Description:
An RNA of 177 nucleotides, treated with DMS and 2A3 and read out base by base. The reactions ran in a buffer of 150 mM KOAc, 10 mM MgCl2 and 150 mM bicine (pH 8.5), at 24 C. It was measured as part of the RMDB library OK2TRN. High 2A3 reactivity points to a flexible backbone, as in loops and unpaired stretches.
RNA sequence: GGGAACGACUCGAGUAGAGUCGAAAAUGUUGAAGGUGACAACGUGCUUAAAGCUGACCUGGCCUGCUUUAUGCAUUUCGACUAACGCUUUAUAGGUGGUCAUCGGCGUGCCGCCAGUCGGCAGGCCAGACUCGUAUCCAUUCGUGGAUACGAGUCUAAAAGAAACAACAACAACAAC
Reactivity to DMS in 0.01 (KOAc 150mM, MgCl2 10mM, bicine 150mM(pH8.5), 24C), signal-to-noise 4, nucleotides 027 to 126: u010g030u010u000g000a140a110g000g010u000g000a110c030a060a070c100g020u020g000c070u000u000a020a050a040g010c020u010g010a110c100c040u010g000g030c020c030u000g000c020u010u000u000a030u010g000c020a120u010u010u000c060g010a020c050u000a080a170c150g000c020u010u000u010a090u000a100g010g010u000g000g010u000c070a080u010c080g010g010c030g000u000g010c010c010g010c030c140a090g000u010c030g010g000c010a020g010g020c010c010
Reactivity to 2A3 in 0.01 (KOAc 150mM, MgCl2 10mM, bicine 150mM(pH8.5), 24C), signal-to-noise 3, nucleotides 027 to 126: u130g030u070u100g060a130a040g070g050u070g000a000c010a080a040c060g030u100g030c020u020u100a070a080a000g000c000u020g040a090c020c000u010g030g010c000c020u040g020c030u010u110u090a070u190g010c000a000u040u080u080c040g010a020c040u080a170a040c090g030c050u120u100u080a200u120a150g120g000u080g030g000u030c000a020u040c030g000g000c080g070u020g000c010c010g020c020c010a030g100u220c000g000g000c010a000g100g000c000c000